Overview
The data come from the RNA Mapping Database (RMDB), library TTRDES. Structure probing data (2A3 and DMS) for a 177-nucleotide construct. The RNA was probed in 150 mM KOAc, 10 mM MgCl2 and 150 mM bicine (pH 8.5) at 24 C. For DMS the reverse transcriptase was MarathonRT. For 2A3, 39,935 sequencing reads were counted. For 2A3 the reverse transcriptase was SuperScript II with manganese.
[RMDB]
RNA sequence: GGGAACGACUCGAGUAGAGUCGAAAAGAUAUGGAGGUGACAGGCUAGAAACGCAUCGGAAACGAUGCCUUUCUUGGACCCUGUACCUCCUAAGUCAAAGAUUAUAAGGCUUCGGCCUUAUAAUCAACUACCUAAUAUAGUUCGCUAUAUUAGGUAGAAAAGAAACAACAACAACAAC
Reactivity to 2A3 in 0.01 (KOAc 150mM, MgCl2 10mM, bicine 150mM(pH8.5), 24C), signal-to-noise 8, nucleotides 027 to 126: g010a010u050a030u120g000g020a020g070g010u150g290a050c000a000g010g030c080u210a070g020a010a010a000c010g000c000a000u000c000g010g020a050a040a010c010g000a000u010g000c000c010u020u010u020c020u100u190g260g130a180c020c000c010u000g000u010a000c000c000u010c000c000u000a030a000g010u000c050a290a030a010g000a000u010u010a000u010a010a000g020g000c020u040u220c300g110g000c040c000u000u000a000u000a000a000u010c000a000a010
Reactivity to DMS in 0.01 (KOAc 150mM, MgCl2 10mM, bicine 150mM(pH8.5), 24C), signal-to-noise 9, nucleotides 027 to 126: g010a040u000a300u010g000g010a020g010g020u000g010a030c010a010g000g000c100u000a030g010a010a010a010c300g000c000a000u000c000g000g000a090a080a170c000g010a010u000g000c000c060u000u000u000c000u000u010g040g000a130c300c010c010u000g000u000a030c000c000u000c000c000u000a010a050g010u000c030a130a170a170g000a020u000u000a010u000a000a010g010g010c000u000u020c300g030g000c000c000u000u000a000u000a000a000u000c000a080a190